[RMDB]
Chemical mapping of a 177-nucleotide RNA with DMS and 2A3. The reactions ran in a buffer of 150 mM KOAc, 10 mM MgCl2 and 150 mM bicine (pH 8.5), at 24 C. For DMS the reverse transcriptase was MarathonRT.
RNA sequence: GGGAACGACUCGAGUAGAGUCGAAAAUUGGCCUUUGAUGUUGGAUCGAGUCCUCUGCUGAUUUCUGGCGAAAAUCUCCAACCUCAGAGAAGCCGCCGCCUGCGAUGUGACUUGGUUUUAUGUAAAACAUACGGUACUAUUUCGAUAGUACCGUAUGAAAAGAAACAACAACAACAAC
Reactivity to DMS in 0.01 (KOAc 150mM, MgCl2 10mM, bicine 150mM(pH8.5), 24C), signal-to-noise 5, nucleotides 027 to 126: u030u020g000g000c020c030u020u010u010g030a050u000g000u010u010g000g000a030u010c090g020a060g000u010c080c060u020c050u040g050c020u010g000a090u010u020u030c120u030g010g000c030g010a070a040a060a130u020c010u000c000c020a020a090c070c070u010c070a110g000a030g000a070a080g000c080c010g010c030c040g030c090c020u000g000c040g000a040u000g010u000g010a050c110u000u010g010g010u000u010u000u020a090u010g010u020a050a070a120a140
Reactivity to 2A3 in 0.01 (KOAc 150mM, MgCl2 10mM, bicine 150mM(pH8.5), 24C), signal-to-noise 6, nucleotides 027 to 126: u100u110g070g030c020c010u050u020u050g050a050u010g000u010u010g010g020a050u080c090g010a020g060u060c030c030u020c040u070g010c020u040g110a250u160u170u100c070u110g010g000c040g020a050a060a020a100u060c020u000c010c010a030a060c000c020u020c020a000g010a000g010a070a030g020c020c010g020c000c000g010c000c000u030g000c020g050a080u090g040u060g050a040c000u030u040g070g080u100u080u050u040a110u110g210u140a030a020a000a030